[RMDB]
RNA sequence: GGGAACGACUCGAGUAGAGUCGAAAAGCGUCCAAGGCCUUAUACUGGGUGCUACCAUCUACCUUAUAGGCUUUGAUGGGACUGCGGUAAUCACCAGAGCUGUGGCCGCAGACAAUGGGCUGACGGCGUAUAUGAACAAGUUCGCUUGUUCAUAUACAAAAGAAACAACAACAACAAC
Reactivity to DMS in 0.01 (KOAc 150mM, MgCl2 10mM, bicine 150mM(pH8.5), 24C), signal-to-noise 9, nucleotides 027 to 126: g010c040g010u010c030c030a070a150g000g010c010c010u010u030a070u030a080c180u010g000g000g030u010g010c100u010a150c050c030a030u010c040u010a070c020c010u000u030a120u040a050g000g010c210u020u020u010g000a040u010g000g010g000a160c030u010g010c010g000g000u010a120a120u030c040a060c020c040a170g010a120g010c150u010g010u000g000g010c000c010g000c020a020g000a060c130a090a090u010g000g000g010c010u000g000a220c170g010g010c100
Reactivity to 2A3 in 0.01 (KOAc 150mM, MgCl2 10mM, bicine 150mM(pH8.5), 24C), signal-to-noise 9, nucleotides 027 to 126: g030c010g020u030c020c010a050a050g050g000c010c020u190u160a110u070a190c130u150g050g010g040u080g050c020u070a080c000c010a010u010c020u050a040c010c000u230u180a160u170a250g040g000c020u160u090u070g040a040u020g010g020g040a030c020u030g000c010g000g020u100a150a110u150c010a020c030c030a060g050a030g220c220u120g010u020g050g000c000c000g000c000a000g000a010c030a040a130u110g020g030g000c030u050g040a060c040g030g020c030